[RMDB]
RNA sequence: GGGAACGACUCGAGUAGAGUCGAAAAUAAGCGGGGGAGGUAGCGGUGCCCUGUACUCGCAAUCCGCUCUAGCGAGGCUGAAUUCCUUUCUGAGGCUGGUAUCCUGUAGGGUCUGCCUUAAGUAAGUGGUGUUGACGUCCGGGUCCUGCGCAAUGGGGUGUAUAAGCAUGUUCGCAUGCUUAUACACAAAAGAAACAACAACAACAAC
Reactivity to DMS in 0.01 (KOAc 150mM, MgCl2 10mM, bicine 150mM(pH8.5), 24C), signal-to-noise 1, nucleotides 027 to 156: u010a100a140g000c020g010g000g020g030g000a120g040g000u000a060g000c030g020g000u000g030c040c010c020u000g020u000a060c020u000c020g030c030a050a080u000c010c010g000c010u010c130u010a090g040c010g040a080g000g010c040u000g010a100a190u010u000c010c030u000u000u020c060u000g010a040g010g010c020u020g060g010u010a060u020c030c010u000g020u010a130g010g010g030u010c010u020g020c020c000u000u000a040a110g020u010a050a130g010u000g030g000u000g000u010u000g000a110c060g000u010c020c050g030g050g060u000c030c000u000g010c050g050c060a060a080u000g030g020g000
Reactivity to 2A3 in 0.01 (KOAc 150mM, MgCl2 10mM, bicine 150mM(pH8.5), 24C), signal-to-noise 2, nucleotides 027 to 156: u140a020a000g010c000g000g010g010g000g000a030g000g010u020a030g000c010g030g000u050g020c030c000c010u080g060u130a080c020u010c020g020c040a030a190u000c010c010g030c040u110c170u140a010g000c010g000a020g010g000c010u000g000a030a060u120u160c010c000u040u080u000c030u030g050a030g010g000c020u060g060g010u120a090u130c030c000u090g170u230a160g000g070g000u000c040u020g000c000c000u060u000a140a060g020u000a040a030g020u030g130g000u040g020u030u060g020a060c020g050u020c040c000g000g000g000u030c020c020u040g010c040g000c030a020a090u150g050g000g000
Structure probing data (DMS and 2A3) for a 207-nucleotide construct. Values cover nucleotides 27 to 156. The reactions ran in a buffer of 150 mM KOAc, 10 mM MgCl2 and 150 mM bicine (pH 8.5), at 24 C. In probing experiments dimethyl sulfate is read out at A N1 and C N3, which are open when not base-paired.